[RMDB]
RNA sequence: GGGAACGACUCGAGUAGAGUCGAAAAGGUUAACAGGCCCAUGUACAGGAAGCCCAGGAUCUAUCGCAUCUGGAGAGGUCCAGAUGUUCCUAGAGGGUGUGAAGGUCCUUGUAAGGUCCAGUCGUACACCGAUUGAGGGAUUCGUCCCUCAAUCGGUAAAAGAAACAACAACAACAAC
Reactivity to 2A3 in 0.01 (KOAc 150mM, MgCl2 10mM, bicine 150mM(pH8.5), 24C), signal-to-noise 1, nucleotides 027 to 126: g080g010u120u130a100a050c080a040g040g100c030c030c000a050u110g010u000a030c030a050g050g000a020a010g040c030c020c030a020g000g030a010u000c030u080a180u060c060g000c020a000u000c000u020g000g050a090g010a050g120g130u010c000c000a000g010a100u090g000u030u010c010c000u010a030g030a100g060g010g010u040g000u020g060a070a040g010g010u000c000c060u020u090g090u050a030a090g010g000u000c020c000a000g060u070c030g000u040a000c020
Reactivity to DMS in 0.01 (KOAc 150mM, MgCl2 10mM, bicine 150mM(pH8.5), 24C), signal-to-noise 2, nucleotides 027 to 126: g010g020u000u040a130a110c160a080g010g030c000c030c030a130u010g030u000a040c050a120g000g000a140a080g000c010c020c010a070g000g000a040u010c000u000a090u000c070g020c020a000u000c050u000g010g000a080g020a140g020g000u030c020c010a060g040a040u000g000u000u000c010c030u000a060g020a200g000g000g030u000g030u000g010a090a130g000g010u000c000c010u000u000g010u000a070a070g020g010u000c000c000a110g000u000c080g000u010a050c110